[RMDB]
RNA sequence: GGGAACGACUCGAGUAGAGUCGAAAAGAUAUGGAGCCAGCAUCGAUCUACGUCAGCUCGGAAACGAGCUGAGCGUAGGGAGCUGGAUUCCUAAGUCAAAACCAGACCCACUUCGGUGGGUCUGGAAGAUAUGUGGAAGCUUCGGCUUCCACAUAUCAAAAGAAACAACAACAACAAC
Reactivity to DMS in 0.01 (KOAc 150mM, MgCl2 10mM, bicine 150mM(pH8.5), 24C), signal-to-noise 2, nucleotides 027 to 126: g010a070u010a300u000g000g010a020g000c010c000a000g010c000a300u010c170g000a070u010c000u000a010c010g010u000c000a010g020c000u010c000g000g000a100a120a180c010g030a000g010c010u000g010a000g000c010g020u000a000g000g000g000a010g010c000u000g000g000a030u000u000c010c000u020a050a160g030u000c030a050a050a190a090c010c010a000g010a020c000c000c010a020c010u000u020c220g020g020u000g010g000g000u000c000u000g000g000a010a060
Reactivity to 2A3 in 0.01 (KOAc 150mM, MgCl2 10mM, bicine 150mM(pH8.5), 24C), signal-to-noise 1, nucleotides 027 to 126: g050a010u080a060u200g000g000a000g010c020c010a000g000c000a150u300c080g110a060u020c020u010a000c010g030u000c010a010g010c020u000c000g070g000a110a130a040c010g000a010g020c020u000g000a000g030c000g010u000a000g020g000g000a010g000c000u010g060g000a000u030u050c000c000u000a170a020g070u030c030a020a040a060a100c000c020a010g000a000c000c000c000a000c030u120u090c280g140g030u010g020g000g000u000c000u020g000g000a000a010
An RNA of 177 nucleotides, treated with DMS and 2A3 and read out base by base. For DMS, 1,877 sequencing reads were counted. The reactions ran in a buffer of 150 mM KOAc, 10 mM MgCl2 and 150 mM bicine (pH 8.5), at 24 C. For 2A3 the reverse transcriptase was SuperScript II with manganese. The data come from the RNA Mapping Database (RMDB), library TTRDEL.